[RMDB]
RNA sequence: GGGAACGACUCGAGUAGAGUCGAAAACUCGCAGUGUGGGUGCGGCCUCGUACCGGGCAGCGUGACCCUGACCUACAGCAAACGCCCCAGAGCCCAAGGGCCUCCCGGGGCGCGUCUGCAGUAACAGACUUAUGCGGAAUUUCGAUUCCGCAUAAGUAAAAGAAACAACAACAACAAC
Reactivity to DMS in 0.01 (KOAc 150mM, MgCl2 10mM, bicine 150mM(pH8.5), 24C), signal-to-noise 4, nucleotides 027 to 126: c060u000c020g030c040a060g000u030g030u010g010g000g010u000g000c040g020g030c180c080u020c050g000u020a040c060c060g000g010g010c020a060g000c020g000u010g010a120c030c010c010u000g000a080c120c020u020a020c020a040g020c120a050a140a230c040g000c010c000c000c000a130g020a080g000c000c000c030a170a160g050g010g000c060c030u010c070c030c080g020g000g010g000c010g030c070g000u010c030u000g000c010a050g010u000a060a070c110a090g020
Reactivity to 2A3 in 0.01 (KOAc 150mM, MgCl2 10mM, bicine 150mM(pH8.5), 24C), signal-to-noise 4, nucleotides 027 to 126: c020u020c010g050c040a080g060u110g010u120g130g020g010u030g010c020g010g070c010c070u160c020g040u070a120c040c030g040g030g000c020a050g020c040g020u050g100a090c000c010c000u020g060a060c020c000u030a040c020a020g000c030a070a050a040c010g010c000c000c000c000a010g000a020g000c020c010c030a080a140g060g020g000c030c020u050c020c030c070g000g000g000g000c020g010c000g010u010c030u010g000c000a020g010u040a120a060c030a030g090